An RNA of 177 nucleotides, treated with 2A3 and DMS and read out base by base. The DMS profile rests on 3,133 reads. As a SHAPE reagent, 2A3 marks flexible, mostly unpaired nucleotides at the ribose 2'-OH. It was measured as part of the RMDB library TTRDEL. The 2A3 profile rests on 2,091 reads.
RNA sequence: GGGAACGACUCGAGUAGAGUCGAAAAGAUAUGGAAGGACUUUUGACGCUCGAGACUCGGAAACGAGUUGGCGAGCGAUAAGUCCCUUCCUAAGUCAAACGGAGGGCGACUUCGGUCGCCCUCCGAACAUCUAAUAACAGUUCGCUGUUAUUAGAUGAAAAGAAACAACAACAACAAC
Reactivity to 2A3 in 0.01 (KOAc 150mM, MgCl2 10mM, bicine 150mM(pH8.5), 24C), signal-to-noise 1, nucleotides 027 to 126: g010a020u080a030u170g020g010a020a010g020g020a030c030u090u120u180u230g210a090c090g000c000u030c020g020a030g020a030c000u020c000g010g030a010a020a020c000g010a020g000u000u070g200g290c020g000a010g030c000g000a010u000a000a000g000u000c030c050c060u000u000c000c000u030a130a010g120u080c040a140a010a120c010g000g060a000g040g110g060c130g080a000c030u100u120c300g140g000u020c000g000c000c000c000u000c000c020g000a000a010
Reactivity to DMS in 0.01 (KOAc 150mM, MgCl2 10mM, bicine 150mM(pH8.5), 24C), signal-to-noise 3, nucleotides 027 to 126: g010a020u000a300u010g010g000a020a020g000g000a030c000u000u000u010u000g010a250c100g010c000u000c000g030a300g000a010c010u000c000g020g000a110a090a180c000g010a000g000u000u010g000g030c030g000a010g000c010g010a030u000a010a000g010u000c110c040c020u000u000c000c000u010a040a120g000u000c030a070a100a240c070g000g000a030g000g000g000c000g000a040c010u000u010c200g030g010u010c000g030c000c030c000u010c000c000g000a010a100